[RMDB]
RNA sequence: GGGAACGACUCGAGUAGAGUCGAAAAGGCCGCGCGUACCGGCUCGAGUGGUACGCGUUUGGCCGGUGAAGGUCCUGGUUAGGCCCGCGAAAGGCGCGUGUUAGGCGGGCCUAUGCGCGCGGAAAAAGCAUCAGCCUAGGUUCGCCUGGGCUGGUGCAAAAGAAACAACAACAACAAC
Reactivity to DMS in 0.01 (KOAc 150mM, MgCl2 10mM, bicine 150mM(pH8.5), 24C), signal-to-noise 8, nucleotides 027 to 126: g010g010c000c000g000c000g010c000g010u000a000c000c010g010g020c060u020c130g010a110g020u020g000g000u000a010c000g000c010g000u000u030u030g040g010c000c000g000g010u020g000a140a100g020g000u000c000c010u000g000g010u010u010a050g000g000c000c000c010g010c010g000a050a080a080g010g000c020g010c020g010u010g000u020u030a130g000g010c000g000g000g000c010c000u000a000u020g010c030g000c030g010c070g000g000a060a070a070a120a110
Reactivity to 2A3 in 0.01 (KOAc 150mM, MgCl2 10mM, bicine 150mM(pH8.5), 24C), signal-to-noise 4, nucleotides 027 to 126: g000g000c000c000g000c000g000c000g010u000a000c000c000g100g020c050u040c060g040a050g040u090g010g000u000a000c000g000c000g000u010u040u040g000g010c000c000g000g000u060g040a080a010g050g000u030c000c000u010g010g010u020u050a010g000g000c000c000c010g000c010g060a070a030a020g070g010c010g000c020g020u050g080u070u080a070g000g040c000g010g000g000c000c000u000a000u000g000c020g000c000g000c000g020g020a090a050a010a000a000